[RMDB]
RNA sequence: GGGAACGACUCGAGUAGAGUCGAAAAUACACUUUACGUGUGCUGGUUUCAUUACUUUGUCCCAAACCAGGCACGCGUAAUUAAAGGCCAGUAUGGCCAGGUCCGCGUUAUCGAUGGUCACCAAUAACGCGUUUGUACAGUUCGCUGUACAAACGCGAAAAGAAACAACAACAACAAC
Reactivity to 2A3 in 0.01 (KOAc 150mM, MgCl2 10mM, bicine 150mM(pH8.5), 24C), signal-to-noise 1, nucleotides 027 to 126: u130a000c030a000c040u030u060u000a000c000g010u020g000u010g000c000u000g010g050u000u000u030c090a070u090u170a160c070u090u110u270g090u100c010c000c000a000a000a020c000c000a010g070g070c000a000c010g020c010g010u030a000a030u040u060a050a020a050g000g000c010c010a020g130u200a120u210g050g000c010c000a010g070g010u030c040c040g000c080g020u000u050a080u150c000g050a050u080g010g010u050c030a020c090c010a000a000u060a060a000
Reactivity to DMS in 0.01 (KOAc 150mM, MgCl2 10mM, bicine 150mM(pH8.5), 24C), signal-to-noise 1, nucleotides 027 to 126: u010a120c150a160c120u000u000u000a000c020g020u010g020u000g000c000u000g000g000u000u000u000c100a130u010u010a070c200u010u000u000g010u020c070c000c040a020a020a040c010c020a000g000g000c000a000c030g010c020g020u000a000a040u000u000a060a060a100g010g010c010c060a080g030u000a070u020g040g020c010c020a010g000g030u010c060c030g040c060g000u000u010a020u000c010g010a050u000g000g010u020c060a150c000c030a070a070u020a020a090
Structure probing data (2A3 and DMS) for a 177-nucleotide construct.
It was measured as part of the RMDB library M2PK90.
Conditions: 150 mM KOAc, 10 mM MgCl2 and 150 mM bicine (pH 8.5), 24 C.
The DMS profile rests on 853 reads.